[RMDB]
RNA sequence: GGGAACGACUCGAGUAGAGUCGAAAAGGGUGAUGUCUCCUAACAUUUAUCAAUGGGGGCACUCGGUCGUGCUGUGGGUAGAAAUUUUAUUUCGUGCCUACCUUAGACGCUUGUCGUCGGGAGUAUGUGGGACUGAUGAACUUCGGUUCAUCAGUAAACUUCAUCAACAGUUCGCUGUUGAUGAAGUAAAAGAAACAACAACAACAAC
Reactivity to DMS in 0.01 (KOAc 150mM, MgCl2 10mM, bicine 150mM(pH8.5), 24C), signal-to-noise 2, nucleotides 027 to 156: g000g010g030u000g000a080u010g020u000c000u010c000c020u000a130a200c080a150u000u000u000a150u020c110a080a150u000g010g010g000g050g010c000a020c020u000c040g020g010u010c060g020u000g000c040u000g010u000g010g000g040u000a290g000a020a050a090u000u000u000u010a080u010u020u010c020g020u000g030c020c010u020a020c020c050u010u000a080g010a060c040g020c040u010u000g010u000c010g010u020c030g000g010g010a080g070u010a030u010g010u010g000g000g000a080c010u000g000a010u010g000a000a000c010u000u010c300g070g000u000u000c000a010u010c010a010g010u000a010a070
Reactivity to 2A3 in 0.01 (KOAc 150mM, MgCl2 10mM, bicine 150mM(pH8.5), 24C), signal-to-noise 6, nucleotides 027 to 156: g060g010g030u050g050a140u030g020u010c010u000c020c010u080a130a060c060a150u210u300u300a210u210c130a100a120u090g000g000g000g000g000c000a010c010u010c010g010g020u060c040g020u040g050c090u060g000u030g010g000g010u030a020g110a020a050a010u150u270u150u160a110u030u130u050c030g040u110g000c000c000u000a010c010c000u040u060a050g010a020c010g010c040u140u270g130u300c030g020u010c000g000g030g000a060g050u100a090u190g050u130g010g020g030a010c000u000g000a000u000g000a010a010c010u030u050c220g050g000u000u010c000a000u000c000a000g000u000a000a000
Record summary: An RNA of 207 nucleotides, treated with DMS and 2A3 and read out base by base. For DMS the reverse transcriptase was MarathonRT. For DMS, 6,519 sequencing reads were counted. The reactions ran in a buffer of 150 mM KOAc, 10 mM MgCl2 and 150 mM bicine (pH 8.5), at 24 C. The data come from the RNA Mapping Database (RMDB), library M2RFPK.